[RMDB]
RNA sequence: GGGAACGACUCGAGUAGAGUCGAAAAUUGCAGCAGCCCAACAAAGAAAGGCAAUUAGGUAUUGGAACUGUGGAAAGGAGGGACACUCGGCAAGACAGUGCCGAGCACCUAGAAGACAGGGCUGCUGACAAAGACGACUCUUCGGAGUCGUCUUUGUAAAAGAAACAACAACAACAAC
Reactivity to DMS in 0.01 (KOAc 150mM, MgCl2 10mM, bicine 150mM(pH8.5), 24C), signal-to-noise 2, nucleotides 027 to 126: u010u050g050c030a000g000c020a000g020c000c000c000a040a160c290a100a110a090g010a040a100a050g010g070c120a120a190u060u000a040g000g020u000a080u000u030g000g050a080a110c030u010g000u010g000g040a100a150a130g030g000a100g050g030g000a230c240a120c030u010c010g000g000c150a080a130g000a060c120a060g000u000g000c000c000g000a000g000c220a000c010c000u000a000g000a040a060g000a150c170a100g000g000g000c000u000g000c000u000g000
Reactivity to 2A3 in 0.01 (KOAc 150mM, MgCl2 10mM, bicine 150mM(pH8.5), 24C), signal-to-noise 2, nucleotides 027 to 126: u050u200g000c010a000g070c010a000g000c000c020c010a050a000c030a000a080a040g150a110a060a130g060g060c070a050a020u100u020a120g120g010u080a010u160u050g040g000a070a030c010u020g030u080g140g120a000a060a210g050g020a000g000g000g150a120c000a120c070u000c000g010g200c030a030a030g090a020c090a050g070u000g060c000c000g020a000g000c000a000c000c000u030a080g060a110a000g070a070c090a070g000g000g000c000u000g030c000u000g000
Structure probing data (DMS and 2A3) for a 177-nucleotide construct. The data come from the RNA Mapping Database (RMDB), library OK1LIB. The DMS profile rests on 1,959 reads.